[RMDB]
RNA sequence: GGGAACGACUCGAGUAGAGUCGAAAAUACUGGUUCGUUCGCGAACCAGUAAAUGCUAGUUCUCACGAACUAGGCUAAGUUAUGGCGUGCUUUCAGCACUUGGGGUCUGCACGUUCGCGUGCAGACCACCAACGGCAUAGUUCGCUAUGCCGUUGGUAAAAGAAACAACAACAACAAC
Reactivity to 2A3 in 0.01 (KOAc 150mM, MgCl2 10mM, bicine 150mM(pH8.5), 24C), signal-to-noise 3, nucleotides 027 to 126: u040a000c000u010g010g000u000u000c000g010u030u030c160g020c000g100a000a000c000c000a020g000u000a000a010a000u140g010c010u020a010g000u000u000c050u030c040a020c080g010a010a000c000u010a010g190g000c060u110a150a100g130u160u170a160u250g190g040c030g070u020g010c000u070u300u230c150a030g000c020a030c000u060u100g060g010g030g000u000c000u010g000c010a000c000g010u060u060c210g020c000g060u000g000c000a000g000a020c000c000
Reactivity to DMS in 0.01 (KOAc 150mM, MgCl2 10mM, bicine 150mM(pH8.5), 24C), signal-to-noise 4, nucleotides 027 to 126: u000a010c000u000g010g010u000u000c000g010u010u010c220g030c020g010a000a000c000c010a010g000u000a000a060a090u010g010c010u000a030g000u000u010c000u010c270a210c300g000a010a020c010u000a000g010g010c040u010a050a120g010u000u010a070u000g010g000c120g020u000g010c000u000u000u000c210a090g010c020a010c020u000u000g010g020g010g000u000c000u010g010c000a010c020g020u000u010c240g000c000g010u000g000c000a000g000a000c000c000
Structure probing data (2A3 and DMS) for a 177-nucleotide construct. For DMS the reverse transcriptase was MarathonRT. Source: RMDB library RFMREP, as collected in RNAgym. Reactivities are given for positions 27 through 126. Conditions: 150 mM KOAc, 10 mM MgCl2 and 150 mM bicine (pH 8.5), 24 C. The DMS profile rests on 4,403 reads.